The record gives the reactivity of an RNA of 177 nucleotides to 2A3 and DMS. DMS adducts were read by reverse transcription with MarathonRT. The data come from the RNA Mapping Database (RMDB), library OK1LIB. 2A3 adducts were read by reverse transcription with SuperScript II with manganese. The reactions ran in a buffer of 150 mM KOAc, 10 mM MgCl2 and 150 mM bicine (pH 8.5), at 24 C. For DMS, 8,966 sequencing reads were counted. The 2A3 profile rests on 2,708 reads.
RNA sequence: GGGAACGACUCGAGUAGAGUCGAAAAAGUGCGAAAUAAACCAGGAAAGCACGAAACUGGGAAAGAGUGGAAGAUGGAAACUACGUUACAUCGAAAGUAGGAAAGAAACACUCGAAGAAAUAAAGAAGGGAAUACAAUAGUUCGCUAUUGUAUUCCCAAAAGAAACAACAACAACAAC
Reactivity to 2A3 in 0.01 (KOAc 150mM, MgCl2 10mM, bicine 150mM(pH8.5), 24C), signal-to-noise 3, nucleotides 027 to 126: a000g080u120g000c060g110a000a150a080u130a170a010a090c000c000a000g010g000a100a160a080g000c000a000c090g000a130a000a000c040u000g000g000g050a010a230a020g010a020g000u050g000g060a060a040g040a060u050g000g100a110a000a000c020u020a000c020g090u160u090a050c060a130u170c170g070a000a080a040g000u040a000g000g150a030a100a000g030a020a030a000c000a010c030u020c000g070a080a040g100a030a030a090u280a140a160a020g250a060a040
Reactivity to DMS in 0.01 (KOAc 150mM, MgCl2 10mM, bicine 150mM(pH8.5), 24C), signal-to-noise 5, nucleotides 027 to 126: a090g010u000g020c010g010a120a070a130u040a060a090a170c050c060a040g010g020a130a100a140g010c020a020c030g010a060a050a120c080u040g010g010g020a060a100a090g000a020g040u000g010g000a070a060g030a080u010g000g000a180a080a090c000u010a020c080g010u030u030a100c110a090u030c090g020a130a040a100g000u000a030g010g010a050a080a120g000a110a060a070c010a020c030u030c010g010a050a060g000a090a080a070u050a060a070a120g000a080a100